[RMDB]
RNA sequence: GGGAACGACUCGAGUAGAGUCGAAAACGCCGAAUGAACUAAUAAUCACGACAGCGAUUAACGUUACAAUAAAUUGUAAAUCAAUUUCUACAUUAGCGACGGGUGCGACCAUAAUUGCAAGCAUGGCCAUGCUGUCGUCCUUCGGGACGACAGCAUGAAAAGAAACAACAACAACAAC
Reactivity to DMS in 0.01 (KOAc 150mM, MgCl2 10mM, bicine 150mM(pH8.5), 24C), signal-to-noise 1, nucleotides 027 to 126: c010g080c040c000g000a300a010u000g000a160a030c010u050a100a100u000a040a050u000c120a030c070g000a210c300a010g000c000g000a070u000u000a010a080c180g000u000u000a090c010a000a120u000a010a080a070u000u000g000u040a000a060a030u000c000a090a000u000u000u070c220u000a040c080a220u010u000a260g010c000g000a090c060g000g000g000u010g000c000g000a040c170c030a100u000a120a050u040u000g000c100a000a160g000c040a040u000g000g000c020
Reactivity to 2A3 in 0.01 (KOAc 150mM, MgCl2 10mM, bicine 150mM(pH8.5), 24C), signal-to-noise 2, nucleotides 027 to 126: c000g000c000c000g040a010a130u060g030a010a020c050u040a030a090u020a030a040u140c000a020c120g180a080c120a030g090c070g040a040u000u180a010a250c110g060u080u080a030c060a010a020u170a120a050a060u090u000g010u070a100a090a080u240c010a000a000u010u030u000c070u110a150c020a090u140u020a000g000c050g040a030c080g060g000g000u110g020c000g000a040c010c020a010u110a160a100u050u050g000c000a010a150g080c080a070u020g010g000c000